[RMDB]
RNA sequence: GGGAACGACUCGAGUAGAGUCGAAAAGCGGGUGUCCGCGGCGUACCGCGUGAGGAUGUCCGCCAGCCGCUCGUCGCGCAGCCCGUGUUCGGCCAGUCGCAGCGCUAGCUCCGCCGACACCGGCGAGCAUCUAGGCGGGUUUCGACCCGCCUAGAUGAAAAGAAACAACAACAACAAC
Reactivity to DMS in 0.01 (KOAc 150mM, MgCl2 10mM, bicine 150mM(pH8.5), 24C), signal-to-noise 4, nucleotides 027 to 126: g010c010g010g000g010u010g020u010c140c070g010c010g010g010c220g020u000a080c150c070g000c050g010u020g000a150g000g000a060u020g000u010c050c060g020c030c050a090g000c050c040g010c040u000c050g010u030c030g020c070g000c130a220g000c020c030c060g010u020g010u000u010c040g000g000c000c110a120g010u010c080g000c110a120g000c060g020c060u030a130g000c010u000c090c130g010c010c000g000a030c120a100c080c050g000g000c030g010a050g000
Reactivity to 2A3 in 0.01 (KOAc 150mM, MgCl2 10mM, bicine 150mM(pH8.5), 24C), signal-to-noise 7, nucleotides 027 to 126: g020c010g000g010g000u040g030u050c030c010g010c020g060g020c050g060u150a180c080c080g020c030g030u080g050a160g050g010a050u060g070u050c020c010g010c010c000a010g010c000c010g020c020u020c020g050u020c020g000c000g000c060a040g030c010c010c010g030u050g030u070u070c030g010g010c030c030a050g070u090c050g020c090a050g010c030g020c080u040a030g010c010u050c050c040g000c010c020g040a060c030a030c030c000g020g000c010g000a010g020
Chemical mapping of a 177-nucleotide RNA with DMS and 2A3.
DMS adducts were read by reverse transcription with MarathonRT.
2A3 adducts were read by reverse transcription with SuperScript II with manganese.
Values cover nucleotides 27 to 126.